[RMDB]
RNA sequence: GGGAACGACUCGAGUAGAGUCGAAAAGCAGGAAGUAUUUUUUUACUGACACUGGUCCUGGUUAUCUGGCAACCCAGAGGACUGAGUAUCGGCUGGAGCGCGGGUAUUGGCGCGGUGCUGGCACUGAAUGACACAUAGUUUUCGAACUAUGUGUCAUAAAAGAAACAACAACAACAAC
Reactivity to DMS in 0.01 (KOAc 150mM, MgCl2 10mM, bicine 150mM(pH8.5), 24C), signal-to-noise 6, nucleotides 027 to 126: g010c030a040g000g000a130a040g010u000a000u000u000u010u010u020u010u000a040c040u000g000a110c090a080c050u000g010g000u000c010c010u000g010g000u000u000a060u000c040u010g010g020c100a100a130c140c020c080a080g010a060g000g010a050c040u000g010a050g010u000a050u000c030g010g010c040u010g000g010a130g010c070g010c040g010g000g020u010a100u000u010g010g010c040g010c030g010g010u000g010c030u000g000g020c060a050c050u000g010a120
Reactivity to 2A3 in 0.01 (KOAc 150mM, MgCl2 10mM, bicine 150mM(pH8.5), 24C), signal-to-noise 4, nucleotides 027 to 126: g050c020a020g010g070a050a010g040u050a150u070u080u050u010u040u070u100a050c020u050g080a030c000a030c090u020g000g040u020c010c010u010g050g020u050u050a070u090c020u020g070g000c040a090a050c030c000c020a030g030a010g090g010a020c020u040g040a000g020u020a040u070c010g030g030c030u030g080g080a090g000c070g000c040g010g060g060u150a150u210u190g100g000c020g000c000g030g020u040g030c010u010g020g000c020a020c050u030g060a130

Conditions: 150 mM KOAc, 10 mM MgCl2 and 150 mM bicine (pH 8.5), 24 C. An RNA of 177 nucleotides, treated with DMS and 2A3 and read out base by base. The 2A3 profile rests on 5,096 reads.